Conditions: 150 mM KOAc, 10 mM MgCl2 and 150 mM bicine (pH 8.5), 24 C. The record gives the reactivity of an RNA of 170 nucleotides to DMS and 2A3. For 2A3 the reverse transcriptase was SuperScript II with manganese. For 2A3, 23,949 sequencing reads were counted.

[RMDB]
RNA sequence: GGGAACGACUCGAGUAGAGUCGAAAAAUAUAUGAAACUCUCGGAUGCACUUAAACGACAGAUUCGCAUUGCAUGCCGUAAGUGUAAUUUAGCUUUCCGGUUAACCACCUCAAAGCUACGCGCUAAUAACCUAAUCCCUUCGGGGAUUAGAAAAGAAACAACAACAACAAC
Reactivity to DMS in 0.01 (KOAc 150mM, MgCl2 10mM, bicine 150mM(pH8.5), 24C), signal-to-noise 8, nucleotides 027 to 129: a120u050a080u030a080u040g010a100a150a080c020u010c080u020c020g000g030a050u010g010c020a000c200u000u030a030a090a080c030g000a000c200a150g030a080u040u030c090g050c170a030u000u000g040c020a050u000g060c010c000g000u020a040a030g030u020g020u040a030a060u050u030u050a000g000c040u060u020u000c050c170g000g000u000u070a100a090c170c120a130c020c010u020c300a040a040a040g000c020u000a040c190g030c060g010c050u000a040a050u050a060a070c150
Reactivity to 2A3 in 0.01 (KOAc 150mM, MgCl2 10mM, bicine 150mM(pH8.5), 24C), signal-to-noise 9, nucleotides 027 to 129: a000u080a000u050a010u060g100a090a040a020c010u020c000u000c010g010g000a020u010g000c000a030c080u090u140a130a100a030c040g080a040c060a100g150a260u180u090c030g000c070a000u000u100g010c000a000u080g260c000c010g030u030a030a030g000u000g010u040a050a130u050u060u070a000g010c000u000u020u000c020c000g000g000u020u040a040a020c040c020a010c000c020u040c040a010a010a000g010c010u020a040c080g070c000g000c070u060a110a050u080a080a090c000